Chemical mapping of a 177-nucleotide RNA with 2A3 and DMS. Source: RMDB libraries RFM100 and RFMREP, as collected in RNAgym. For 2A3 the reverse transcriptase was SuperScript II with manganese. The reactions ran in a buffer of 150 mM KOAc, 10 mM MgCl2 and 150 mM bicine (pH 8.5), at 24 C.
RNA sequence: GGGAACGACUCGAGUAGAGUCGAAAAGAGCAAGACCAAAUAGGGGAACUCGCGGCUUCGACCGCAGCGCGCGGCCCGCGCGUGUUCCCGGGUAGGUCGCUAGAGGCGUGCGGCGACGCACGUCCCACUCAAAUCUAUGGUUCGCCAUAGAUUUGAGAAAAGAAACAACAACAACAAC
Reactivity to 2A3 in 0.01 (KOAc 150mM, MgCl2 10mM, bicine 150mM(pH8.5), 24C), signal-to-noise 8, nucleotides 027 to 126: g100a010g010c060a140a090g010a010c000c020a070a110a060u150a090g020g010g020g010a010a010c010u040c180g010c010g020g000c020u230u170c200g090a140c030c010g000c010a010g030c030g000c010g000c000g060g200c050c060c050g000c000g000c010g010u020g020u010u000c000c000c000g000g010g000u070a020g000g000u010c010g000c010u050a050g010a050g090g000c000g000u000g000c000g010g010c030g020a030c000g010c000a000c000g010u020c000c000c000a040
Reactivity to DMS in 0.01 (KOAc 150mM, MgCl2 10mM, bicine 150mM(pH8.5), 24C), signal-to-noise 5, nucleotides 027 to 126: g000a050g010c030a110a130g010a030c000c010a050a120a140u030a130g010g020g000g010a010a020c010u000c300g010c000g000g020c040u030u030c300g010a130c000c000g000c010a270g030c040g010c030g010c030g000g010c150c090c140g000c010g000c020g020u000g010u010u000c000c000c000g010g000g020u010a150g010g000u000c010g000c040u000a040g000a050g010g000c010g010u000g000c010g000g000c220g000a150c000g000c000a000c000g010u000c000c010c080a230